Structure probing data (DMS and 2A3) for a 177-nucleotide construct.
2A3 adducts were read by reverse transcription with SuperScript II with manganese.
For 2A3, 2,335 sequencing reads were counted.
Source: RMDB library OK1LIB, as collected in RNAgym.
The DMS profile rests on 4,780 reads.
RNA sequence: GGGAACGACUCGAGUAGAGUCGAAAACUUUCCAUUAUGGAUAGCAAUAGUAUGGCCGACCAUUGUGGGUAUAAUGGUAGAUGCCCGGGACCAGGUUAUUAUUAUUUCUUUUUCUGCUUUUGUGUUAGAAAGUGUAAUUGUUCGCAAUUACACUUUCAAAAGAAACAACAACAACAAC
Reactivity to DMS in 0.01 (KOAc 150mM, MgCl2 10mM, bicine 150mM(pH8.5), 24C), signal-to-noise 2, nucleotides 027 to 126: c160u010u010u010c010c010a150u040u060a040u000g000g010a030u010a060g010c090a050a040u000a020g000u000a050u000g000g000c000c020g000a060c030c020a110u010u020g000u040g000g010g010u020a030u010a040a050u000g000g030u030a070g010a080u010g000c000c010c020g000g010g000a050c070c070a120g010g000u000u000a040u020u000a040u010u020a070u000u010u010c000u000u000u010u010u000c030u010g010c060u000u010u010u010g010u010g000u020u020a130
Reactivity to 2A3 in 0.01 (KOAc 150mM, MgCl2 10mM, bicine 150mM(pH8.5), 24C), signal-to-noise 5, nucleotides 027 to 126: c000u050u030u020c000c010a020u180u170a130u270g050g010a060u070a040g030c010a060a080u030a100g040u030a060u100g060g000c020c000g020a040c000c040a080u060u190g050u150g140g000g000u090a040u020a060a080u100g100g030u090a070g040a150u090g020c000c000c000g000g060g020a120c080c070a070g000g030u040u040a100u050u010a010u030u010a020u020u100u040c030u030u130u020u040u030c030u030g080c050u040u190u120u170g100u010g040u040u040a050